Source information
Source: RMDB library OK3TST, as collected in RNAgym. Structure probing data (2A3 and DMS) for a 207-nucleotide construct. The DMS profile rests on 2,937 reads.

[RMDB]
RNA sequence: GGGAACGACUCGAGUAGAGUCGAAAACAAGGUGUCUAGUCCAGCUCCCAUGGAGGGUGGGGAAGAAGAAGAAGAACUUCUAGGUCCUAAACUAGAAGAGGAAGAAGAAGAGGAAGUAGUUGAAAAUGAUGAGGAGAUAGCCUUUUCAGGCAAGGACGUUGUUUAUAGACUUCGGUCUAUAAACAACAAAAGAAACAACAACAACAAC
Reactivity to 2A3 in 0.01 (KOAc 150mM, MgCl2 10mM, bicine 150mM(pH8.5), 24C), signal-to-noise 5, nucleotides 027 to 156: c040a040a060g010g010u050g030u060c040u090a050g060u050c030c020a040g000c040u020c000c040c010a030u080g040g010a040g020g010g010u020g000g030g020g000a000a050g020a020a010g010a000a000g030a030a010g040a040a020c000u020u010c010u010a010g060g040u120c020c070u150a130a080a050c020u010a010g010a020a010g000a030g040g010a030a010g010a030a000g020a010a010g010a010g020g010a030a020g010u080a010g010u030u090g060a070a050a050a090u120g030a040u050g010a020g030g010a040g020a070u090a030g000c000c010u040u080u100u180c110a010g030g000c020a010a030g060g000a010c070
Reactivity to DMS in 0.01 (KOAc 150mM, MgCl2 10mM, bicine 150mM(pH8.5), 24C), signal-to-noise 2, nucleotides 027 to 156: c050a030a100g040g030u000g010u010c030u000a130g020u000c090c070a120g030c050u000c020c000c010a170u000g010g020a190g010g020g050u000g040g000g000g000a090a110g010a090a100g000a080a060g010a080a140g050a060a140c000u000u000c010u000a010g010g000u010c100c080u000a040a080a040c030u010a040g030a030a080g020a090g020g010a030a050g000a040a100g010a110a040g000a050g000g000a030a060g030u000a050g000u010u000g010a050a060a060a070u000g000a080u000g020a050g050g020a080g020a070u020a080g010c010c010u010u010u010u010c120a040g000g030c050a060a070g000g000a090c130